[RMDB]
This 177-nucleotide RNA was probed chemically with DMS and 2A3. DMS adducts were read by reverse transcription with MarathonRT. The DMS profile rests on 1,149 reads. Source: RMDB library RFMREP, as collected in RNAgym. The reactions ran in a buffer of 150 mM KOAc, 10 mM MgCl2 and 150 mM bicine (pH 8.5), at 24 C.

RNA sequence: GGGAACGACUCGAGUAGAGUCGAAAAUCGGCACAUGCGAUAUUUCAUACCACAAGAAUGUGGCGCUCCGCGGUUGGUGAGCAUGCUCGGUCCGUCCGAGAAGCCUUAAAACUGCGACGACACAUUCCGUAUCGUAACGGUUCGCCGUUACGAUACGAAAAGAAACAACAACAACAAC
Reactivity to DMS in 0.01 (KOAc 150mM, MgCl2 10mM, bicine 150mM(pH8.5), 24C), signal-to-noise 2, nucleotides 027 to 126: u000c020g010g040c070a100c260a070u030g010c030g010a040u000a080u000u010u000c120a060u010a260c030c000a110c230a120a110g020a030a020u000g010u000g000g000c000g000c060u010c050c020g020c010g010g030u010u000g000g000u000g010a070g020c000a010u000g010c010u000c000g000g020u000c220c300g040u000c010c000g000a020g020a020a030g020c010c030u000u020a070a090a000a000c000u000g010c010g000a140c000g000a000c030a000c020a020u000u020c000
Reactivity to 2A3 in 0.01 (KOAc 150mM, MgCl2 10mM, bicine 150mM(pH8.5), 24C), signal-to-noise 3, nucleotides 027 to 126: u020c010g040g060c090a070c060a230u220g060c010g020a010u020a250u030u120u040c070a080u080a180c000c040a030c020a150a040g000a020a000u010g010u010g000g030c020g010c050u130c130c030g020c020g010g010u010u020g040g090u080g020a080g030c020a010u200g000c010u000c000g000g020u000c060c160g060u060c000c000g020a000g030a010a010g000c020c010u130u230a040a080a010a010c010u000g000c020g180a220c020g000a030c060a000c000a020u000u020c010